[RMDB]
RNA sequence: GGGAACGACUCGAGUAGAGUCGAAAAGAUAUGGAGCGACAUAGGAGGAAGCCUUACAGCGAAAGUAUGUCGGAAACGACAUAUGAGUAGCUGUAAGGCUUCUACCCACCCUAUGCGCUCCUAAGUCCUUGUAUGUCAAGUUCGCUUGACAUACAAGAAAAGAAACAACAACAACAAC
Reactivity to DMS in 0.01 (KOAc 150mM, MgCl2 10mM, bicine 150mM(pH8.5), 24C), signal-to-noise 7, nucleotides 027 to 126: g000a080u010a300u010g000g010a020g010c010g000a150c000a000u000a010g030g010a170g040g000a010a010g010c000c000u000u000a010c010a000g000c010g000a170a170a300g010u000a010u000g020u000c000g010g010a100a100a230c000g010a010c000a000u000a000u010g010a050g020u000a080g000c000u000g000u000a000a000g000g010c000u000u000c000u010a020c080c100c150a300c130c010c000u000a000u000g000c020g000c000u000c000c000u000a010a070g000u000c040
Annotation
The record gives the reactivity of an RNA of 177 nucleotides to DMS. The reactions ran in a buffer of 150 mM KOAc, 10 mM MgCl2 and 150 mM bicine (pH 8.5), at 24 C. For DMS, 9,208 sequencing reads were counted. Reactivities are rounded to 0.1 and cut off at 0 and 3.